Chemical mapping of a 177-nucleotide RNA with DMS.
RNA sequence: GGGAACGACUCGAGUAGAGUCGAAAACGGAGUGGAACGACCUGUGGCUGCUCAGCGAAGUCUUCCACGAAGGCAAGCAGCCGCAGGUGCUGGAAGAGAACGUUACCUCCGACACGUCGGCCAGCAAGGUAUGCUCACCUUUCGAGGUGAGCAUACCAAAAGAAACAACAACAACAAC
Reactivity to DMS in 0.01 (KOAc 150mM, MgCl2 10mM, bicine 150mM(pH8.5), 24C), signal-to-noise 1, nucleotides 027 to 126: c120g010g010a100g030u030g010g000a070a070c070g100a100c000c010u000g010u000g000g030c010u000g000c010u000c030a160g010c060g010a160a170g030u000c000u000u000c080c150a160c200g020a060a050g000g000c010a180a020g000c000a000g000c000c000g000c020a000g000g010u000g000c000u000g000g010a070a090g000a220g000a230a170c030g000u000u000a090c050c030u010c000c090g000a210c130a100c180g010u000c160g000g040c010c040a030g030c140a180a120

The DMS profile rests on 667 reads. The reactions ran in a buffer of 150 mM KOAc, 10 mM MgCl2 and 150 mM bicine (pH 8.5), at 24 C. DMS adducts were read by reverse transcription with MarathonRT. Source: RMDB library OK2TST, as collected in RNAgym.